[RMDB]
RNA sequence: GGGAACGACUCGAGUAGAGUCGAAAAGAUAUGGACUUUAGAAUGCCGAUAAGAUGGGUAUCGGAAACGAUACUCAUCUUUUGACGGCACUAAAGUCCUAAGUCAAACCAGCUCUUCGGAGCUGGAAGUGUAGGAUUUACUUCGGUAAAUCCUACACAAAAGAAACAACAACAACAAC
Reactivity to 2A3 in 0.01 (KOAc 150mM, MgCl2 10mM, bicine 150mM(pH8.5), 24C), signal-to-noise 2, nucleotides 027 to 126: g000a010u020a030u100g030g010a010c000u030u020u010a080g100a300a210u200g000c010c040g160a160u100a300a000g000a000u010g010g000g030u000a000u010c000g020g000a040a020a000c000g000a010u000a000c000u000c000a000u000c000u010u000u000u020g010a010c010g000g000c000a000c000u000a000a000a000g010u000c000c000u000a030a000g010u000c000a010a020a110c010c000a000g000c000u020c010u050u150c300g260g010a010g000c000u010g000g010a030a120
Reactivity to DMS in 0.01 (KOAc 150mM, MgCl2 10mM, bicine 150mM(pH8.5), 24C), signal-to-noise 2, nucleotides 027 to 126: g000a010u000a180u010g000g010a020c000u000u000u010a020g010a150a120u000g020c020c000g030a170u010a010a000g020a010u000g000g000g010u000a010u000c000g040g000a050a030a100c010g030a010u000a010c000u000c000a000u000c000u000u000u010u010g020a140c120g010g000c010a060c010u000a000a010a000g010u000c000c000u010a010a040g000u000c030a170a160a280c000c000a000g010c010u000c000u010u010c210g050g000a020g010c000u020g010g020a000a080